Notes
The record gives the reactivity of an RNA of 177 nucleotides to DMS and 2A3. The RNA was probed in 150 mM KOAc, 10 mM MgCl2 and 150 mM bicine (pH 8.5) at 24 C. Values cover nucleotides 27 to 126. In probing experiments dimethyl sulfate is read out at A N1 and C N3, which are open when not base-paired.
RNA sequence: GGGAACGACUCGAGUAGAGUCGAAAACGCGCCGACGCCCUCGCAGCGGCCGAGGCUGCAGCCGUGCAGGCUGCCGGCGCGGAUGCCCGAGCCGCUGCCCUGCAGGCCGAGCUGGACGCCUACCGCGUGCUAGUACUAGUUUCGACUAGUACUAGCAAAAAGAAACAACAACAACAAC
Reactivity to DMS in 0.01 (KOAc 150mM, MgCl2 10mM, bicine 150mM(pH8.5), 24C), signal-to-noise 8, nucleotides 027 to 126: c020g010c010g020c010c010g000a100c270g010c170c020c020u000c040g000c050a090g010c030g000g000c050c010g000a040g010g010c040u000g010c010a030g010c000c010g010u020g010c180a170g000g010c010u000g010c010c030g010g010c010g010c010g000g000a050u010g010c020c000c000g000a080g000c010c010g010c020u000g010c030c020c020u000g010c060a100g010g000c040c030g000a120g000c040u000g010g010a100c100g000c020c030u000a110c070c070g000c100g020
Reactivity to 2A3 in 0.01 (KOAc 150mM, MgCl2 10mM, bicine 150mM(pH8.5), 24C), signal-to-noise 5, nucleotides 027 to 126: c000g000c000g010c000c000g040a080c130g050c040c000c000u020c010g020c040a050g020c020g020g000c020c020g000a020g030g000c030u040g000c000a000g010c000c010g100u210g260c180a060g040g000c010u010g010c000c000g010g000c010g000c040g010g010a030u100g050c000c000c020g000a010g000c000c000g000c010u010g010c020c010c000u050g020c050a040g050g020c020c020g030a030g050c040u110g010g040a040c030g020c010c010u090a090c030c060g040c030g070